RNA sequence: GGGAACGACUCGAGUAGAGUCGAAAAGACGGGUCAGUAACAGGAUCGAACGUACCCCGAGGUGGGGGAUAGCGGUGGGAAACUGCCGGUAAUACCUCAUGAUCUCUCCGGAGCAAAGCCUCGGCGCGUGUAAGGAAGUGUUCGCACUUCCUUACACAAAAGAAACAACAACAACAAC
Reactivity to DMS in 0.01 (KOAc 150mM, MgCl2 10mM, bicine 150mM(pH8.5), 24C), signal-to-noise 2, nucleotides 027 to 126: g000a070c030g040g000g030u020c020a000g030u000a090a170c140a220g000g000a050u000c050g000a120a110c030g020u000a140c020c060c000c020g030a050g010g000u000g020g000g000g000g010a090u000a030g000c010g000g010u010g000g010g000a080a070a220c010u000g010c010c000g010g000u000a050a070u040a140c000c000u000c000a160u000g020a140u000c020u000c010u010c180c110g000g000a040g010c120a070a120a110g000c000c000u000c010g000g020c140g000c220
Reactivity to 2A3 in 0.01 (KOAc 150mM, MgCl2 10mM, bicine 150mM(pH8.5), 24C), signal-to-noise 2, nucleotides 027 to 126: g040a030c030g040g010g030u030c010a020g050u110a160a000c030a060g070g060a030u020c030g000a050a040c020g030u110a030c000c010c010c000g000a010g000g000u080g010g030g000g000g000a000u020a010g080c000g000g010u050g010g000g000a040a020a040c010u000g010c000c000g020g000u030a070a010u130a230c000c010u000c030a030u130g220a270u030c030u000c000u000c030c120g090g010a010g000c030a090a050a000g010c000c000u000c030g090g010c120g040c040